[RMDB]
RNA sequence: GGGAACGACUCGAGUAGAGUCGAAAAAUAGGGAUAAUCGGCAGCCAAGCGCUAAGGACUAGCAAUAGUCUAUGCGUGCAGUUCACAGACUAAAUGGCAGUGGGUUCGGCUCAGAGAGUCCGAGCUUAAGAUAUAGUCGGUCCCUACCGAAAGGUAGCAUAGGAUUUGACUUCGGUCAAAUCCUAUGAAAAGAAACAACAACAACAAC
Reactivity to 2A3 in 0.01 (KOAc 150mM, MgCl2 10mM, bicine 150mM(pH8.5), 24C), signal-to-noise 5, nucleotides 027 to 156: a000u080a010g020g000g010a010u080a190a060u300c030g020g010c010a010g020c010c000a060a020g010c000g000c010u020a060a100g010g000a000c010u010a010g020c020a060a200u000a020g000u000c000u020a010u080g000c010g010u050g030c020a010g000u090u130c100a060c020a160g100a060c030u070a040a090a130u080g020g000c010a010g040u080g040g010g000u000u000c010g000g020c010u000c070a110g130a000g010a000g230u050c010c020g000a000g000c000u060u020a040a060g060a070u100a040u070a170g000u000c000g000g000u020c010c000c000u010a040c000c000g040a040a020a000g040g020u040a020g010
Reactivity to DMS in 0.01 (KOAc 150mM, MgCl2 10mM, bicine 150mM(pH8.5), 24C), signal-to-noise 2, nucleotides 027 to 156: a100u000a010g030g010g030a030u000a090a100u000c040g000g020c030a210g010c010c010a090a300g010c010g000c020u000a070a210g010g010a070c020u000a050g030c300a090a280u000a030g020u000c000u000a300u010g010c060g030u010g020c080a010g010u010u000c050a170c080a140g000a090c030u000a050a060a090u000g000g040c010a150g040u000g000g000g010u000u000c000g000g040c030u000c030a300g010a250g030a100g000u010c010c000g000a060g020c010u000u020a050a100g000a100u010a120u000a050g020u000c000g020g050u000c010c000c010u000a020c000c040g000a120a060a130g030g010u010a050g020

Structure probing data (2A3 and DMS) for a 207-nucleotide construct. It was measured as part of the RMDB library RSTRND. 2A3 adducts were read by reverse transcription with SuperScript II with manganese. Conditions: 150 mM KOAc, 10 mM MgCl2 and 150 mM bicine (pH 8.5), 24 C. Values are in units of 0.01, from 0 to 300, in steps of 10.